[RMDB]
The record gives the reactivity of an RNA of 170 nucleotides to 2A3 and DMS. Source: RMDB library 15KLIB, as collected in RNAgym.
RNA sequence: GGGAACGACUCGAGUAGAGUCGAAAACCCAGGAAUGGGAAUGGGGGGAGAUCGACCGGGUCCCGCAGAACCCGAUGGAGUUCCCAACCUUCCCCUUACGGACAAAAGCUGGUCCCGAUAGGGGCACUAAGGGUAGUCUUCGGACUACCCAAAAGAAACAACAACAACAAC
Reactivity to 2A3 in 0.01 (KOAc 150mM, MgCl2 10mM, bicine 150mM(pH8.5), 24C), signal-to-noise 5, nucleotides 027 to 129: c030c000c000a020g060g090a100a080u140g000g000g030a000a100u080g040g000g000g000g020g010a050g020a080u020c000g060a020c030c040g010g000g000u030c030c050c040g040c020a030g030a040a020c000c010c010g000a020u090g070g010a030g010u050u070c000c000c000a070a140c000c000u050u060c000c000c000c020u030u060a010c020g000g010a000c050a040a170a030a000g100c080u110g040g000u000c000c000c010g040a090u130a170g010g000g000g000c010a020c030u100a100a100
Reactivity to DMS in 0.01 (KOAc 150mM, MgCl2 10mM, bicine 150mM(pH8.5), 24C), signal-to-noise 2, nucleotides 027 to 129: c050c010c000a060g020g040a140a030u030g010g040g050a060a040u100g020g020g010g040g050g000a000g010a060u020c000g080a030c000c000g030g020g010u020c040c030c120g060c150a100g020a120a090c000c000c000g010a090u060g000g000a000g030u000u070c030c010c020a020a100c040c050u040u040c010c000c010c050u000u000a000c170g000g000a020c120a080a080a140a060g050c000u060g060g050u010c050c000c020g030a140u100a080g000g000g030g070c150a150c090u050a130a000
Reactivities are given for positions 27 through 129.